Structure probing data (DMS and 2A3) for a 177-nucleotide construct.
The DMS profile rests on 19,444 reads.
Source: RMDB library OK1LIB, as collected in RNAgym.
For 2A3, 12,443 sequencing reads were counted.
RNA sequence: GGGAACGACUCGAGUAGAGUCGAAAAUCAAGCGGAGCAGGGGGUCAAAGAGACAAAGACGUUGACGCUGGCUCAACAGGGAAGAUAUCAGUGCCAAAGCUUAAGGCAAUGUCGAAGAAAAUGCGCCCAACCUUAGUAGGUUCGCCUACUAAGGUUGAAAAGAAACAACAACAACAAC
Reactivity to DMS in 0.01 (KOAc 150mM, MgCl2 10mM, bicine 150mM(pH8.5), 24C), signal-to-noise 7, nucleotides 027 to 126: u020c080a100a100g010c090g000g000a090g020c060a070g000g020g020g010g010u010c050a040a100a060g010a090g020a080c110a080a090a100g010a090c070g000u000u000g000a090c070g000c050u020g000g000c040u010c050a060a090c110a050g000g010g000a050a070g010a070u010a060u010c080a070g000u000g000c030c010a050a100a090g020c080u000u010a080a070g000g010c030a040a050u010g000u000c050g010a080a090g010a040a040a040a050u020g010c050g000c050c050
Reactivity to 2A3 in 0.01 (KOAc 150mM, MgCl2 10mM, bicine 150mM(pH8.5), 24C), signal-to-noise 8, nucleotides 027 to 126: u110c030a040a020g050c030g050g010a020g000c020a050g040g010g000g030g020u020c020a020a080a020g120a030g010a050c050a030a170a010g060a020c040g020u020u040g020a020c030g010c090u040g040g000c020u020c030a040a060c020a060g080g020g030a080a040g020a060u120a050u130c040a030g080u050g040c010c000a090a090a040g020c050u150u130a080a020g020g000c000a020a030u060g020u040c030g030a030a020g050a050a110a010a020u140g040c020g030c000c010